Notes:
This 177-nucleotide RNA was probed chemically with 2A3 and DMS. The data come from the RNA Mapping Database (RMDB), library TTRDEL. The RNA was probed in 150 mM KOAc, 10 mM MgCl2 and 150 mM bicine (pH 8.5) at 24 C. Reactivities are given for positions 27 through 126.
RNA sequence: GGGAACGACUCGAGUAGAGUCGAAAAAAAAAAAGAUAUGGAUCCACGACAUGUCUGUAAGUUCGCGAAGAACUCGGAAACGAGGGAGCGAAUUGAGGACAACAGCGUGGAUCCUAAGUCAAAAAAACAUACACUUGAAGUUCGCUUCAAGUGUAUGAAAAGAAACAACAACAACAAC
Reactivity to 2A3 in 0.01 (KOAc 150mM, MgCl2 10mM, bicine 150mM(pH8.5), 24C), signal-to-noise 1, nucleotides 027 to 126: a010a000a010a000a010a000a000g060a070u120a050u090g000g010a000u020c020c000a000c030g050a030c040a060u100g000u010c010u010g050u030a000a020g010u000u010c020g000c040g160a300a090g030a110a080c010u020c000g010g020a080a070a030c000g000a000g000g000g000a030g000c010g000a000a000u050u020g060a060g030g000a000c030a040a040c020a080g090c000g000u000g020g020a000u000c000c000u000a000a010g010u000c010a000a000a000a000a000a170a170
Reactivity to DMS in 0.01 (KOAc 150mM, MgCl2 10mM, bicine 150mM(pH8.5), 24C), signal-to-noise 3, nucleotides 027 to 126: a010a010a060a020a070a080a080g000a000u000a300u000g000g000a010u010c010c000a010c000g010a030c060a160u000g010u000c000u000g000u020a230a040g000u000u000c000g000c010g010a060a070g010a110a160c000u000c000g020g010a120a100a170c000g000a010g000g000g000a110g010c000g000a010a010u000u010g000a180g000g010a010c010a040a040c230a100g000c020g040u010g010g000a000u000c000c000u010a000a050g010u010c000a000a000a050a080a050a060a130